[RMDB]
RNA sequence: GGGAACGACUCGAGUAGAGUCGAAAAGAUAUGGAGAACCAGGGCCGAAGAACGCUAUCGGAAACGAUAGCGGGAGGAACUACCCUCCCUUCUCCUAAGUCAAAACAGACUGCUUCGGCAGUCUGAACAUAUUCUUCCCGUUCGCGGGAAGAAUAUGAAAAGAAACAACAACAACAAC
Reactivity to DMS in 0.01 (KOAc 150mM, MgCl2 10mM, bicine 150mM(pH8.5), 24C), signal-to-noise 5, nucleotides 027 to 126: g000a030u000a130u010g000g010a020g020a000a030c150c190a030g020g000g020c050c060g010a070a100g010a280a170c010g010c010u000a000u000c000g010g000a040a040a060c000g000a010u000a000g010c000g000g000g000a070g010g010a080a060c110u000a290c030c000c000u000c050c050c110u000u000c000u000c000c010u000a030a100g000u010c020a070a050a090a200c000a010g000a020c000u000g010c000u010u000c140g020g010c000a000g010u000c000u000g010a050a150
Reactivity to 2A3 in 0.01 (KOAc 150mM, MgCl2 10mM, bicine 150mM(pH8.5), 24C), signal-to-noise 2, nucleotides 027 to 126: g020a000u040a020u070g000g000a020g020a040a020c110c050a050g000g020g010c040c090g090a140a020g010a050a020c010g000c010u000a010u000c010g020g000a060a020a010c000g000a000u000a000g000c000g000g000g000a020g000g040a090a080c120u170a080c120c000c000u030c040c000c000u010u000c010u010c000c010u020a070a020g010u030c050a000a000a090a130c000a010g000a000c000u010g020c010u040u080c170g100g010c010a000g010u010c010u000g000a010a000

The record gives the reactivity of an RNA of 177 nucleotides to DMS and 2A3.
The 2A3 profile rests on 6,957 reads.
The reactions ran in a buffer of 150 mM KOAc, 10 mM MgCl2 and 150 mM bicine (pH 8.5), at 24 C.
Reactivities are given for positions 27 through 126.
DMS adducts were read by reverse transcription with MarathonRT.